[RMDB]
RNA sequence: GGGAACGACUCGAGUAGAGUCGAAAACGAAGAGGAAAGAAGGACAGGAGACGCGAACCUGUGAGUGGAAACCCGCUUUAUUCACUGGGGUCGACAACUCUGGGGAGAAAAGGGUGGAUCGGCAGGGCUUAGCGAAAGUGUUCGCACUUUCGCUAAGAAAAGAAACAACAACAACAAC
Reactivity to DMS in 0.01 (KOAc 150mM, MgCl2 10mM, bicine 150mM(pH8.5), 24C), signal-to-noise 2, nucleotides 027 to 126: c080g010a070a040g020a100g010g000a020a040a110g000a070a040g000g010a030c130a060g040g000a060g000a050c200g000c040g010a030a110c030c010u010g000u010g000a020g030u020g020g000a100a050a090c020c010c010g000c180u000u000u010a040u040u010c090a100c090u000g000g000g000g020u000c040g010a110c150a100a070c020u000c020u010g000g000g000g010a060g010a030a070a040a080g000g010g020u000g000g000a090u000c050g000g000c070a030g000g000g000
Reactivity to 2A3 in 0.01 (KOAc 150mM, MgCl2 10mM, bicine 150mM(pH8.5), 24C), signal-to-noise 1, nucleotides 027 to 126: c040g020a070a010g030a020g060g010a070a000a040g040a030a030g050g010a010c030a050g030g010a050g040a030c030g010c010g080a020a070c010c000u030g010u070g060a050g030u100g000g010a070a070a090c020c010c000g100c020u070u120u120a140u070u120c100a100c090u070g000g030g000g030u010c030g060a050c010a110a040c010u000c020u050g040g000g000g010a040g080a000a110a010a010g000g000g020u030g000g000a030u050c030g000g000c070a020g020g000g000

This 177-nucleotide RNA was probed chemically with DMS and 2A3. The 2A3 profile rests on 1,318 reads. The data come from the RNA Mapping Database (RMDB), library VIROID. The reactions ran in a buffer of 150 mM KOAc, 10 mM MgCl2 and 150 mM bicine (pH 8.5), at 24 C.